Background: An RNA of 177 nucleotides, treated with DMS and 2A3 and read out base by base. It was measured as part of the RMDB library OK1LIB. Conditions: 150 mM KOAc, 10 mM MgCl2 and 150 mM bicine (pH 8.5), 24 C. DMS adducts were read by reverse transcription with MarathonRT. The DMS profile rests on 11,487 reads.
RNA sequence: GGGAACGACUCGAGUAGAGUCGAAAAGACCGCUGAAUGCGGAAGUACUAGAUCAACUAGAAAGUAGAUUAAUACAAAAGCUACGUCUCGAAACUAGUUGAUCUAGUCCAGUCGAGACGUAGGAAGAACGCCUAAAUUAGUUCGCUAAUUUAGGCGUAAAAGAAACAACAACAACAAC
Reactivity to DMS in 0.01 (KOAc 150mM, MgCl2 10mM, bicine 150mM(pH8.5), 24C), signal-to-noise 5, nucleotides 027 to 126: g000a090c010c010g020c000u000g030a100a090u040g000c010g000g000a050a090g000u040a180c060u000a000g000a000u000c000a010a010c010u000a020g010a240a130a130g010u020a090g000a140u040u060a100a120u020a070c210a090a060a070a090g010c010u000a000c010g000u010c010u020c010g030a070a110a100c020u000a000g020u000u000g010a010u000c000u010a010g000u020c010c020a160g020u020c010g000a010g000a000c000g000u000a000g010g020a120a090g000a150
Reactivity to 2A3 in 0.01 (KOAc 150mM, MgCl2 10mM, bicine 150mM(pH8.5), 24C), signal-to-noise 8, nucleotides 027 to 126: g060a010c000c000g020c020u110g240a300a140u300g000c000g020g030a020a030g090u070a060c010u000a000g000a010u000c010a000a010c010u010a010g050a100a180a010g110u120a040g040a250u170u180a130a100u210a150c110a040a130a010a020g060c000u000a000c000g010u000c000u000c010g090a130a130a110c020u020a000g000u000u010g000a000u020c000u000a000g000u000c000c000a040g080u030c000g000a000g000a010c000g000u010a000g020g020a040a040g050a050